[RMDB]
The record gives the reactivity of an RNA of 177 nucleotides to 2A3 and DMS. DMS adducts were read by reverse transcription with MarathonRT. For 2A3 the reverse transcriptase was SuperScript II with manganese. It was measured as part of the RMDB library OK1LIB. The 2A3 profile rests on 7,534 reads. For DMS, 8,883 sequencing reads were counted.

RNA sequence: GGGAACGACUCGAGUAGAGUCGAAAAGAAGUGGCAGGGACAUGCCCCAAAAGCUCGUUCUAGCAACAUAUGUUUGGCUAGUUCGAGCGAUUAGUCUAGAGGAGCGUCCUCUCGCCUAUUGACGAGAACUGGUAUCAUGGUUCGCCAUGAUACCAGUAAAAGAAACAACAACAACAAC
Reactivity to 2A3 in 0.01 (KOAc 150mM, MgCl2 10mM, bicine 150mM(pH8.5), 24C), signal-to-noise 7, nucleotides 027 to 126: g110a080a050g110u070g030g010c020a000g000g000g010a010c040a070u230g030c000c000c010c010a000a050a000a030g000c000u000c000g010u000u000c000u010a000g020c000a010a070c020a110u270a040u300g150u130u090u090g150g030c000u000a010g000u000u000c000g010a000g000c000g000a000u000u050a010g100u020c090u150a050g020a160g060g020a100g030c030g010u010c010c000u040c010u010c030g000c000c000u060a140u050u160g080a030c060g030a020g030a120
Reactivity to DMS in 0.01 (KOAc 150mM, MgCl2 10mM, bicine 150mM(pH8.5), 24C), signal-to-noise 4, nucleotides 027 to 126: g000a110a100g020u020g000g030c030a080g010g020g000a020c030a100u020g010c020c000c000c060a070a060a100a250g000c000u000c000g000u010u000c000u000a010g000c000a030a030c030a170u040a090u070g010u020u010u010g000g000c000u000a000g010u000u000c000g040a020g000c000g010a020u020u010a080g010u010c090u020a120g010a250g000g000a130g000c060g010u000c020c000u010c020u040c100g010c010c010u010a130u000u020g000a100c040g000a070g000a170